The record gives the reactivity of an RNA of 177 nucleotides to DMS and 2A3. For 2A3, 2,195 sequencing reads were counted. For DMS the reverse transcriptase was MarathonRT. The RNA was probed in 150 mM KOAc, 10 mM MgCl2 and 150 mM bicine (pH 8.5) at 24 C. The DMS profile rests on 1,721 reads.
RNA sequence: GGGAACGACUCGAGUAGAGUCGAAAAAAGAUAUGGAGCAGGAACUACGUCGGCGUACAUCGAUGAAAGUGAAUCGGAAACGAUUCACUGGAGAUGUACCGCUCGUGGACGCCUGCUCCUAAGUCAACAUCAUGCCAAACUUCGGUUUGGCAUGAUGAAAAGAAACAACAACAACAAC
Reactivity to DMS in 0.01 (KOAc 150mM, MgCl2 10mM, bicine 150mM(pH8.5), 24C), signal-to-noise 2, nucleotides 027 to 126: a130a040g010a070u000a300u010g010g010a030g020c010a010g000g020a120a160c040u030a090c000g020u010c200g010g040c020g040u010a000c000a000u000c000g000a090u000g020a110a120a010g010u010g000a020a000u000c000g010g030a130a090a170c010g010a010u000u010c010a000c000u000g000g000a020g000a000u000g000u000a010c130c040g020c030u000c010g010u000g000g010a030c300g000c000c000u000g000c010u010c000c010u000a000a060g020u000c020a100a160
Reactivity to 2A3 in 0.01 (KOAc 150mM, MgCl2 10mM, bicine 150mM(pH8.5), 24C), signal-to-noise 2, nucleotides 027 to 126: a000a000g070a030u060a040u180g000g020a020g020c020a010g020g000a050a050c080u070a020c090g160u200c120g110g020c040g040u010a010c010a000u030c030g300a300u050g020a010a010a010g010u000g000a000a000u010c010g000g050a060a080a030c020g000a010u010u000c020a000c000u020g030g000a010g000a000u000g000u010a020c020c030g020c010u100c010g030u040g000g050a030c120g030c000c010u010g000c020u000c000c000u020a000a000g010u020c010a020a030